[RMDB]
RNA sequence: GGGAACGACUCGAGUAGAGUCGAAAAUGUGACGAAGAUGAUGAUGCGGAAGCCUUGCUUUCCGUGCAAACUAAGCUUUCCCAGGUGCGAAACCUGCCGUCUCAUCGCACGAGUGCUCUACGGCGCAUCACGUGGAUAUGUUCGCAUAUCCACGUGAAAAAGAAACAACAACAACAAC
Reactivity to DMS in 0.01 (KOAc 150mM, MgCl2 10mM, bicine 150mM(pH8.5), 24C), signal-to-noise 4, nucleotides 027 to 126: u000g020u000g030a080c050g010a120a050g010a080u010g000a110u000g020a160u000g020c040g000g000a030a010g000c020c210u000u010g000c020u000u010u000c050c100g030u010g010c040a040a040a060c100u010a090a200g010c040u010u000u000c020c050c000a070g000g010u000g000c130g000a100a070a070c070c020u000g000c120c020g010u020c050u000c040a120u010c010g000c040a020c090g000a140g010u000g000c040u000c040u000a100c110g010g000c000g000c070a190
Reactivity to 2A3 in 0.01 (KOAc 150mM, MgCl2 10mM, bicine 150mM(pH8.5), 24C), signal-to-noise 3, nucleotides 027 to 126: u130g010u050g030a070c050g070a060a070g030a070u150g010a010u030g020a040u120g000c030g000g020a000a000g000c050c190u100u220g010c090u110u150u000c020c010g000u010g000c010a030a060a010c020u070a090a020g010c000u000u050u070c000c000c010a000g000g030u010g000c050g040a100a030a100c010c020u040g020c000c020g030u030c000u010c030a040u050c000g000c020a020c040g050a050g050u070g010c010u050c030u130a070c060g030g010c020g010c040a040

Conditions: 150 mM KOAc, 10 mM MgCl2 and 150 mM bicine (pH 8.5), 24 C. Chemical mapping of a 177-nucleotide RNA with DMS and 2A3. DMS adducts were read by reverse transcription with MarathonRT. It was measured as part of the RMDB library OK2TST. Reactivities are given for positions 27 through 126. The 2A3 profile rests on 4,269 reads. For 2A3 the reverse transcriptase was SuperScript II with manganese. Reactivities are rounded to 0.1 and cut off at 0 and 3.